Source: RMDB library OK3TST, as collected in RNAgym. This 207-nucleotide RNA was probed chemically with 2A3 and DMS. For 2A3 the reverse transcriptase was SuperScript II with manganese. The reactions ran in a buffer of 150 mM KOAc, 10 mM MgCl2 and 150 mM bicine (pH 8.5), at 24 C. DMS adducts were read by reverse transcription with MarathonRT.
RNA sequence: GGGAACGACUCGAGUAGAGUCGAAAAGCUAGCCCAGUUCCUCGGUGAGCAGAUCGCUUCGACCUGGCAGCAGGGUACCGACGCUGUCGCCGGGUUCGCUCGGUCCAACCUCGACCAGGCGAUGAGCGACCUCGGCAUCGGCGGGGGCGCGAUCACCACAGGAAUUGCUAUUCGUAGCAAUUCCUGUAAAAGAAACAACAACAACAAC
Reactivity to 2A3 in 0.01 (KOAc 150mM, MgCl2 10mM, bicine 150mM(pH8.5), 24C), signal-to-noise 3, nucleotides 027 to 156: g040c080u060a030g000c010c000c030a000g050u050u030c030c070u060c010g010g030u050g030a030g050c070a030g060a140u060c030g010c060u110u100c080g160a130c010c010u040g050g000c040a070g070c000a010g000g010g040u100a120c020c010g070a080c000g040c020u010g010u040c060g030c010c000g000g000g000u000u010c000g010c000u010c050g090g020u010c030c020a060a060c030c050u090c120g110a120c090c020a020g010g010c020g060a070u080g010a010g000c000g000a010c000c000u020c010g020g000c000a010u050c020g010g000c010g010g000g010g010g000c040g000c010g010a010u010c020a020c020c010
Reactivity to DMS in 0.01 (KOAc 150mM, MgCl2 10mM, bicine 150mM(pH8.5), 24C), signal-to-noise 1, nucleotides 027 to 156: g020c110u000a110g000c000c000c020a230g020u010u000c030c000u000c000g030g070u000g010a070g020c000a080g010a030u000c020g000c070u000u020c080g030a070c000c010u000g010g020c130a190g040c020a080g000g000g000u000a060c020c010g030a070c000g000c010u000g020u000c070g020c020c020g020g020g020u000u000c030g010c020u000c030g050g020u000c050c040a010a060c040c010u010c020g030a220c180c080a070g020g030c030g000a110u000g000a080g010c020g000a020c030c000u020c000g070g020c000a120u010c010g000g000c020g020g000g020g010g040c020g050c000g010a070u000c030a060c020c030